[RMDB]
RNA sequence: GGGAACGACUCGAGUAGAGUCGAAAAUAGAAGAAGAGGCUAGGUGGUAUUCCGGUGUGGGAUACUUGGUAAUAUGUAACGAUAAUUGCAUAAGAUUGUAGGACGGAAUUUACAGUCUUGGUUUUUAAAAACUUCUCGUAGUUCGCUACGAGAAGAACUAUAAUAACUACUUCGGUAGUUAUUAUAGAAAAGAAACAACAACAACAAC
Reactivity to DMS in 0.01 (KOAc 150mM, MgCl2 10mM, bicine 150mM(pH8.5), 24C), signal-to-noise 1, nucleotides 027 to 156: u000a090g000a100a090g000a100a110g000a050g000g030c040u000a060g000g050u010g010g030u000a060u010u010c040c010g000g070u000g000u000g010g010g010a070u000a010c060u000u000g000g020u000a030a140u000a030u000g000u000a080a090c070g040a170u000a060a200u000u000g000c020a100u010a030a060g000a040u000u000g000u000a030g030g010a260c040g030g010a040a220u010u000u000a050c000a050g020u000c000u000u000g010g010u000u000u000u000u000a040a060a090a110a080c010u000u000c000u000c000g010u000a010g000u000u000c300g010c010u010a010c010g010a030g000a000a010g010a040a050
Reactivity to 2A3 in 0.01 (KOAc 150mM, MgCl2 10mM, bicine 150mM(pH8.5), 24C), signal-to-noise 2, nucleotides 027 to 156: u080a010g030a060a010g020a040a010g030a010g060g000c050u050a030g060g040u030g030g030u060a050u090u030c060c020g090g040u140g010u110g060g020g030a020u020a080c020u020u070g010g020u070a090a070u050a110u150g050u060a080a000c050g020a050u040a170a080u170u090g010c020a020u020a090a020g010a050u010u070g010u030a010g010g070a010c090g030g000a030a020u080u070u060a040c030a010g020u000c000u030u040g040g010u070u020u040u080u140a060a110a010a040a040c000u000u000c000u000c000g000u000a010g020u050u050c200g000c090u000a000c000g000a000g000a000a000g000a000a000
This 207-nucleotide RNA was probed chemically with DMS and 2A3. It was measured as part of the RMDB library M2RFPK. High 2A3 reactivity points to a flexible backbone, as in loops and unpaired stretches. The reactions ran in a buffer of 150 mM KOAc, 10 mM MgCl2 and 150 mM bicine (pH 8.5), at 24 C.